[RMDB]
RNA sequence: GGGAACGACUCGAGUAGAGUCGAAAAGUCCUUCCUCGCGCCCGCAGGACCACCCCUCGCCCCCUUUGCGCUGUCGCUUCGGCUACUACCCGGUGGAAACAACUGAAGCUCCCGAGAACCGCUUUUUCUCUAUCUUACUUGCUUCGGGGCGAGGGUGCUAACAACACAUGUUCGCAUGUGUUGUUAGAAAAGAAACAACAACAACAAC
Reactivity to DMS in 0.01 (KOAc 150mM, MgCl2 10mM, bicine 150mM(pH8.5), 24C), signal-to-noise 2, nucleotides 027 to 156: g000u010c030c010u000u010c010c010u000c060g050c030g020c050c060c060g000c160a130g010g000a060c010c010a110c050c000c000c010u000c000g040c010c000c000c010c030u000u000u000g000c060g010c050u000g000u010c080g010c030u000u010c030g050g010c030u010a100c060u000a160c020c000c050g010g000u000g030g000a240a160a130c060a060a220c040u000g000a040a120g030c040u000c030c040c050g000a170g000a060a140c060c040g030c070u000u000u030u000u000c020u000c050u000a110u000c070u000u000a090c050u020u000g010c070u000u000c030g010g000g000g060c000g010a030g010g000g010u010g000
Reactivity to 2A3 in 0.01 (KOAc 150mM, MgCl2 10mM, bicine 150mM(pH8.5), 24C), signal-to-noise 2, nucleotides 027 to 156: g040u030c010c010u030u070c030c030u050c040g050c020g040c050c050c050g040c060a040g010g040a030c040c030a040c000c050c000c000u000c000g060c010c000c010c000c050u040u050u040g020c050g020c020u040g040u100c000g000c000u010u020c020g020g000c010u070a060c000u040a030c070c000c000g060g000u030g010g010a050a120a090c030a020a050c040u010g010a010a010g050c020u030c000c040c030g020a030g010a050a040c060c020g070c140u090u090u000u090u020c010u000c000u020a100u070c010u020u060a090c020u050u110g030c000u040u120c020g000g000g000g010c000g000a000g010g000g000u010g000

This 207-nucleotide RNA was probed chemically with DMS and 2A3. For DMS, 4,263 sequencing reads were counted. It was measured as part of the RMDB library VIROID. 2A3 adducts were read by reverse transcription with SuperScript II with manganese.